[RMDB]
RNA sequence: GGGAACGACUCGAGUAGAGUCGAAAACACUUAUCAGCAAUGCAUUCGCAUCAGGUAGUGCUCACAACCGACACAAUCGCAUUGCGCAUUACAACUGCAGUGCGUCGCCACCCUCACAGCGUCAGCAGAUUACCUGGCACUUCGGUGCCAGGUAAUCAAAAGAAACAACAACAACAAC
Reactivity to DMS in 0.01 (KOAc 150mM, MgCl2 10mM, bicine 150mM(pH8.5), 24C), signal-to-noise 2, nucleotides 027 to 126: c060a120c080u000u030a050u110c020a180g000c210a090a040u000g000c000a180u030u030c030g000c000a040u000c060a030g000g020u000a080g000u000g000c060u000c090a100c250a080a090c130c020g000a100c110a020c140a050a030u000c000g000c050a010u000u000g000c010g000c160a020u000u090a070c300a000a200c240u000g050c060a080g000u000g000c000g000u100c050g000c000c000a090c030c000c060u070c000a060c050a060g000c050g030u000c000a000g000c150a180
Reactivity to 2A3 in 0.01 (KOAc 150mM, MgCl2 10mM, bicine 150mM(pH8.5), 24C), signal-to-noise 2, nucleotides 027 to 126: c030a010c020u130u220a100u230c100a050g060c060a070a030u070g030c020a040u080u110c100g010c030a040u020c010a040g000g090u060a030g030u060g030c020u020c040a040c020a020a050c030c020g040a030c020a010c020a110a090u050c020g000c010a020u000u020g000c000g030c020a100u140u140a080c090a200a030c050u080g000c010a030g000u000g010c000g010u040c000g000c000c000a040c020c030c000u000c000a020c000a020g030c020g080u060c020a000g030c010a020
Notes
Structure probing data (DMS and 2A3) for a 177-nucleotide construct. For DMS the reverse transcriptase was MarathonRT. For 2A3, 2,944 sequencing reads were counted. 2A3 adducts were read by reverse transcription with SuperScript II with manganese.